RNA sequence: GGGAACGACUCGAGUAGAGUCGAAAAGUGUUUGUAAAAAUGGUGCUUUUGUUUUUAUUAACGUCACACAUUCUGAUGGAGACGUGCAACCAAUUAGCACUGGUAAUGUCACGAUACCUACAAACUUUACCAUAUCCGUGCAAGUCGAAUAUAUUCACAUCUAAGAGCCAUUCGUGGCUCUUAGAUGAAAAGAAACAACAACAACAAC
Reactivity to DMS in 0.01 (KOAc 150mM, MgCl2 10mM, bicine 150mM(pH8.5), 24C), signal-to-noise 2, nucleotides 027 to 156: g000u000g050u000u020u010g000u000a000a040a080a130a120u000g000g020u000g000c000u000u010u000u000g020u000u010u010u010u010a060u020u000a080a010c030g060u010c010a090c030a090c030a130u000u000c220u000g010a090u000g000g020a300g000a030c030g010u000g010c130a080a090c230c050a030a070u000u000a040g030c030a050c080u000g040g040u000a020a020u010g000u020c080a060c030g040a180u000a120c040c020u000a030c030a070a030a050c020u010u030u010a090c000c010a080u020a070u000c030c030g010u000g020c050a070a240g010u000c030g020a120a060u010a100u000a160u000u000c060a210
Reactivity to 2A3 in 0.01 (KOAc 150mM, MgCl2 10mM, bicine 150mM(pH8.5), 24C), signal-to-noise 2, nucleotides 027 to 156: g100u030g010u040u030u000g010u010a020a010a030a050a110u090g000g000u010g010c000u070u070u070u140g050u150u060u040u000u140a180u090u090a040a010c020g000u020c020a030c000a000c000a090u190u150c090u260g130a170u010g000g030a130g020a080c000g020u000g060c030a000a000c030c000a010a040u090u070a050g000c000a000c000u000g000g010u030a090a040u080g130u110c050a010c160g030a040u010a010c000c000u080a000c000a010a040a010c000u140u220u050a090c000c040a010u010a030u180c080c040g010u010g090c050a040a060g120u070c020g170a150a000u090a010u030a130u150u120c060a070